[RMDB]
RNA sequence: GGGAACGACUCGAGUAGAGUCGAAAAGAUAUGGAUCCAUCGUGCAGGAGGUGUUUCGGAAACGAAACACUACCCACCCUGACACGAGUGGAUCCUAAGUCAAAACGUACUACUUCGGUAGUACGAAGUCAUUGACUCGGUUCGCCGAGUCAAUGACAAAAGAAACAACAACAACAAC
Reactivity to 2A3 in 0.01 (KOAc 150mM, MgCl2 10mM, bicine 150mM(pH8.5), 24C), signal-to-noise 1, nucleotides 027 to 126: g040a020u100a030u220g000g020a000u000c000c000a000u020c010g020u000g010c020a010g010g010a010g010g010u040g000u000u010u000c030g020g000a070a120a020c020g000a000a000a000c000a000c000u020a040c000c030c020a100c020c000c010u070g100a260c010a030c010g030a020g130u140g000g000a000u030c000c000u000a090a010g100u040c070a010a000a100a100c010g000u020a000c000u000a010c000u000u050c300g080g010u000a000g000u020a020c010g010a010a000
Reactivity to DMS in 0.01 (KOAc 150mM, MgCl2 10mM, bicine 150mM(pH8.5), 24C), signal-to-noise 2, nucleotides 027 to 126: g010a020u000a300u010g100g000a010u040c010c000a070u000c010g000u000g050c000a040g010g020a160g040g000u000g000u030u000u000c010g020g040a090a130a150c000g010a020a030a000c000a000c000u010a000c080c120c130a300c150c000c000u000g000a200c020a000c030g000a020g020u010g060g000a000u000c000c010u000a010a090g010u000c050a060a110a120a190c080g030u030a010c000u000a000c000u000u010c100g000g000u000a000g030u000a000c000g000a000a140